[RMDB]
RNA sequence: GGGAACGACUCGAGUAGAGUCGAAAAUGCCUGUUCGCAGGCACCUUAGCGUACUACUAAUCUUUUGACGUUCCCGUCCUACCCACCGGUUCCCAAAUAGGAACCGAGGGACGGUGAACGAUAAGAUUAGUAUCGCAUCUAAGAUCUUCGGAUCUAAUCGGACCAUAUAAUUCGUUAUAUGGUCCGAAAAAGAAACAACAACAACAAC
Reactivity to DMS in 0.01 (KOAc 150mM, MgCl2 10mM, bicine 150mM(pH8.5), 24C), signal-to-noise 2, nucleotides 027 to 156: u000g000c000c000u000g030u010u010c210g000c020a030g020g050c000a020c050c010u010u000a070g040c080g040u010a110c090u000a040c010u000a000a030u000c000u000u000u000u010g030a300c100g010u000u000c010c010c000g010u010c010c000u010a050c060c010c000a300c170c000g030g020u000u000c000c000c020a080a190a280u000a030g000g020a010a000c000c020g000a050g020g000g030a000c000g000g000u020g020a030a020c000g020a020u000a010a000g020a040u000u000a020g010u000a010u000c030g000c030a160u000c050u000a090a040g010a030u000c010u000u000c300g030g000a080u000c010u000a040a250
Reactivity to 2A3 in 0.01 (KOAc 150mM, MgCl2 10mM, bicine 150mM(pH8.5), 24C), signal-to-noise 5, nucleotides 027 to 156: u080g000c000c000u020g020u050u050c280g010c100a000g000g020c000a060c000c020u050u170a040g010c030g010u070a100c050u020a010c000u000a010a010u000c010u000u100u100u200g300a150c010g000u000u000c000c000c010g010u000c020c000u060a130c070c020c080a050c050c000g000g000u000u000c020c020c030a240a250a040u210a090g000g000a010a010c000c000g010a010g000g000g010a000c000g000g040u230g010a010a000c000g000a010u030a000a000g000a000u000u000a000g000u000a020u170c000g000c000a030u060c030u110a070a030g000a010u010c010u030u080c220g120g010a000u090c020u160a030a210
An RNA of 207 nucleotides, treated with DMS and 2A3 and read out base by base. Source: RMDB library RNAMAK, as collected in RNAgym. Conditions: 150 mM KOAc, 10 mM MgCl2 and 150 mM bicine (pH 8.5), 24 C. Reactivities are given for positions 27 through 156.